[RMDB]
RNA sequence: GGGAACGACUCGAGUAGAGUCGAAAAUGUUCUGCACAUGUCCCGUGGCUAGGUAUACCGCGUUGGGGUAAGACACAUUUGGGUGCCCUGCCAUGCCUGUCAUCCAGAAGUUCUUUCUGGCACUGACCGAAAGCUUUAUGUUCGCAUAAAGCUUUCGAAAAGAAACAACAACAACAAC
Reactivity to 2A3 in 0.01 (KOAc 150mM, MgCl2 10mM, bicine 150mM(pH8.5), 24C), signal-to-noise 2, nucleotides 027 to 126: u050g000u050u060c070u230g080c050a010c020a040u040g030u050c000c000c000g050u020g010g000c040u040a020g000g030u070a060u100a240c020c040g060c050g080u080u080g070g020g010g030u040a100a020g170a010c000a000c020a120u060u100u120g110g000g000u020g000c020c000c000u010g000c000c000a010u030g050c000c020u050g010u030c000a110u200c020c010a010g000a010a000g040u210u050c040u050u050u000c000u000g000g000c020a040c040u020g010a000c020
Reactivity to DMS in 0.01 (KOAc 150mM, MgCl2 10mM, bicine 150mM(pH8.5), 24C), signal-to-noise 3, nucleotides 027 to 126: u000g000u000u000c140u010g000c120a080c040a050u000g000u000c010c020c010g030u010g000g020c030u000a070g010g010u000a070u000a100c020c010g010c140g010u010u000g000g020g010g010u000a080a110g000a070c050a060c070a130u000u010u000g010g020g020u000g010c000c010c010u010g010c010c010a040u000g010c070c070u000g000u000c010a000u010c000c000a010g000a010a040g010u010u010c150u010u000u000c000u000g000g000c070a030c030u000g000a030c010

Structure probing data (2A3 and DMS) for a 177-nucleotide construct. The DMS profile rests on 3,731 reads. High DMS reactivity at an A or C suggests that its Watson-Crick edge is free. The 2A3 profile rests on 2,204 reads. Source: RMDB library RFMREP, as collected in RNAgym. DMS adducts were read by reverse transcription with MarathonRT. Values are in units of 0.01, from 0 to 300, in steps of 10.